[RMDB]
RNA sequence: GGGAACGACUCGAGUAGAGUCGAAAAAUCUGGCGGCCGCCGAGUCGGCGAUGGACGCGUUCAUCGCCGACGUUAUCCCGGAGAGCGUGGCCGCCCGGCUGCGCGAGCUGGGCCCAUGACGGUCAGCUGACUGAAUCUCUUUCGAGAGAUUCAGUCAAAAAGAAACAACAACAACAAC
Reactivity to DMS in 0.01 (KOAc 150mM, MgCl2 10mM, bicine 150mM(pH8.5), 24C), signal-to-noise 2, nucleotides 027 to 126: a060u060c060u040g000g030c000g040g000c010c000g030c010c010g020a080g040u020c010g030g000c000g000a020u040g010g000a060c070g000c300g050u010u000c030a000u000c020g000c000c000g050a000c000g000u050u000a090u020c000c000c000g000g000a040g000a300g000c030g000u000g010g000c030c000g030c110c070c070g000g000c010u000g000c020g000c040g000a060g020c010u000g000g010g000c050c030c100a190u030g010a050c040g000g000u000c010a100g030c060
Reactivity to 2A3 in 0.01 (KOAc 150mM, MgCl2 10mM, bicine 150mM(pH8.5), 24C), signal-to-noise 2, nucleotides 027 to 126: a000u060c040u050g040g000c010g010g000c000c000g010c020c020g020a020g010u010c000g020g000c000g000a000u000g010g010a000c030g070c200g230u070u020c010a010u000c020g020c010c010g000a000c000g000u000u010a040u050c000c000c020g010g020a150g020a000g000c060g000u010g010g000c000c010g060c000c000c000g010g000c000u040g000c030g010c060g060a090g030c020u030g030g020g000c000c000c010a090u130g060a050c020g010g050u010c030a070g000c010